Conditions: 150 mM KOAc, 10 mM MgCl2 and 150 mM bicine (pH 8.5), 24 C. The record gives the reactivity of an RNA of 177 nucleotides to DMS and 2A3. High 2A3 reactivity points to a flexible backbone, as in loops and unpaired stretches. Reactivities are given for positions 27 through 126. For DMS the reverse transcriptase was MarathonRT.
[RMDB]
RNA sequence: GGGAACGACUCGAGUAGAGUCGAAAAUGCUCUGGUACGAGACCAAAUUCAGCCGACAGCUCAGCAUCAAACCCACCAAGGGAGUCGGCCCUAUCAUCAUGGACUCAAGCUGGACGGUGCGUCGCUCGUCGAAGAUACUUUUCGAAGUAUCUUCGACAAAAGAAACAACAACAACAAC
Reactivity to DMS in 0.01 (KOAc 150mM, MgCl2 10mM, bicine 150mM(pH8.5), 24C), signal-to-noise 6, nucleotides 027 to 126: u010g020c070u000c030u010g030g020u000a070c300g010a040g010a090c020c040a040a090a130u010u000c150a120g010c010c020g000a080c010a130g000c050u000c050a050g000c040a060u000c120a060a090a150c040c010c010a090c110c120a100a120g020g000g000a060g020u000c030g020g000c020c050c070u010a060u010c150a070u010c130a100u000g010g010a080c040u000c040a040a260g010c020u000g000g010a080c090g010g000u010g010c090g010u000c050g010c100u000c130
Reactivity to 2A3 in 0.01 (KOAc 150mM, MgCl2 10mM, bicine 150mM(pH8.5), 24C), signal-to-noise 5, nucleotides 027 to 126: u060g000c020u020c020u040g010g010u070a050c050g020a030g040a090c010c040a040a070a120u190u130c050a040g010c000c010g020a030c000a050g030c040u030c070a030g020c030a050u050c060a050a110a150c010c020c000a030c040c050a090a080g010g010g010a030g020u020c000g000g000c000c010c000u150a120u080c040a050u020c020a050u130g020g030a030c000u000c040a010a030g000c020u020g020g020a030c030g030g000u040g010c030g050u070c040g020c060u070c060